[RMDB]
The data come from the RNA Mapping Database (RMDB), library RFM100.
Chemical mapping of a 177-nucleotide RNA with DMS and 2A3.
The DMS profile rests on 2,226 reads.
For 2A3 the reverse transcriptase was SuperScript II with manganese.
The RNA was probed in 150 mM KOAc, 10 mM MgCl2 and 150 mM bicine (pH 8.5) at 24 C.
The 2A3 profile rests on 2,409 reads.
Reactivities are given for positions 27 through 126.
RNA sequence: GGGAACGACUCGAGUAGAGUCGAAAAACUCGAUGGCUACGGCCAUCGAGAAGUGUGAGCAGGCAUCUUCUCAGCCUACAUGUGGAUUCCUAAAUCUGCAGGCUGGUUAGAUGGUUGUCAUGCAUAAGAAAAUCAACUUCUUCGGAAGUUGAUUUUCAAAAGAAACAACAACAACAAC
Reactivity to DMS in 0.01 (KOAc 150mM, MgCl2 10mM, bicine 150mM(pH8.5), 24C), signal-to-noise 1, nucleotides 027 to 126: a040c000u000c000g000a000u000g000g000c020u040a170c070g020g040c000c000a000u000c020g000a000g010a010a100g040u000g000u040g000a040g000c030a010g020g000c000a000u000c000u000u000c010u000c000a020g050c000c000u000a100c290a120u020g030u000g020g010a000u020u000c140c220u050a030a120a040u000c020u000g010c010a020g010g000c010u000g040g030u000u000a000g010a000u000g000g000u000u000g000u000c010a020u020g000c010a140u040a060a070
Reactivity to 2A3 in 0.01 (KOAc 150mM, MgCl2 10mM, bicine 150mM(pH8.5), 24C), signal-to-noise 4, nucleotides 027 to 126: a000c000u000c010g000a010u000g000g020c020u020a090c230g140g000c000c000a000u010c000g000a000g000a020a050g020u030g010u010g000a070g010c000a000g080g010c000a000u000c000u010u010c040u010c000a000g000c000c020u060a070c070a140u160g030u010g000g000a020u030u060c040c010u110a240a180a000u000c010u000g000c000a010g000g000c000u000g010g010u010u010a000g010a030u020g040g300u000u000g000u000c020a020u030g010c010a050u050a300a050